This 177-nucleotide RNA was probed chemically with 2A3. The reactions ran in a buffer of 150 mM KOAc, 10 mM MgCl2 and 150 mM bicine (pH 8.5), at 24 C.

RNA sequence: GGGAACGACUCGAGUAGAGUCGAAAAUGGUAACCCCAACAAUCCUUCAUCUGUAUAUGCAAUUAUACGAUAGCUAGUUUUUUGGUUAUUUGCCUAUAUAAUUGAAAGAAUGUUGGGGCUGCCGAUGGUGGAGGGUCACUUUCGAGUGACCCUCCACAAAAGAAACAACAACAACAAC
Reactivity to 2A3 in 0.01 (KOAc 150mM, MgCl2 10mM, bicine 150mM(pH8.5), 24C), signal-to-noise 1, nucleotides 027 to 126: u070g000g000u010a000a110c000c000c000c000a000a000c000a010a010u070c030c020u000u000c000a050u000c020u120g030u010a000u000a010u010g000c020a000a000u170u060a070u160a130c090g040a120u090a080g000c020u000a150g150u060u070u120u100u160u070g220g000u070u020a000u010u040u010g040c000c000u000a000u000a000u000a060a070u000u020g000a020a040a000g010a030a030u020g010u000u000g000g000g000g000c000u000g000c000c000g010a030u000g110